[RMDB]
RNA sequence: GGGAACGACUCGAGUAGAGUCGAAAAAUCACCGGUGAACUCGAUCAACUCGACGGUGUUCGUGCCCGGUCCCGGCCAGUUGAAGCGGUGCCGCGGCUGCUCGGAGCUGAUCUUCUUCGCCGUGUCCCGGGACGGCCGGUCGAUGCCCGUCGACCACCUAAAGGAUGAUCUUCGGAUCAUCCUUUAGAAAAGAAACAACAACAACAAC
Reactivity to DMS in 0.01 (KOAc 150mM, MgCl2 10mM, bicine 150mM(pH8.5), 24C), signal-to-noise 1, nucleotides 027 to 156: a080u020c010a090c020c000g010g000u000g020a060a050c020u010c080g040a100u010c090a070a050c070u000c010g020a080c020g020g020u000g010u000u000c070g040u000g040c000c030c010g030g020u010c130c020c000g020g030c000c050a160g000u010u010g020a120a100g000c010g030g020u000g030c020c030g030c060g020g000c050u000g030c050u000c030g070g020a070g050c000u010g010a110u000c030u010u000c010u000u000c040g000c000c010g050u000g020u000c110c000c010g010g010g000a130c040g010g000c040c070g050g020u000c010g010a060u020g040c080c000c020g000u000c030g010a030c010c020a150c130
Reactivity to 2A3 in 0.01 (KOAc 150mM, MgCl2 10mM, bicine 150mM(pH8.5), 24C), signal-to-noise 3, nucleotides 027 to 156: a000u130c030a010c050c000g040g020u080g060a090a090c050u030c080g030a060u050c060a070a050c060u010c030g100a070c030g060g010u060g030u080u080c040g050u170g190c000c000c010g020g010u030c060c050c000g060g020c050c090a110g040u080u080g080a070a020g050c010g010g020u040g000c000c020g040c100g170g010c100u120g040c060u060c030g010g010a050g000c010u010g000a150u070c000u030u000c000u010u040c030g020c000c000g020u020g000u020c030c010c000g010g000g010a030c010g000g070c050c070g020g000u000c000g010a000u050g020c020c000c000g000u000c000g000a000c000c020a030c000
Source information: Chemical mapping of a 207-nucleotide RNA with DMS and 2A3. The data come from the RNA Mapping Database (RMDB), library OK3TST.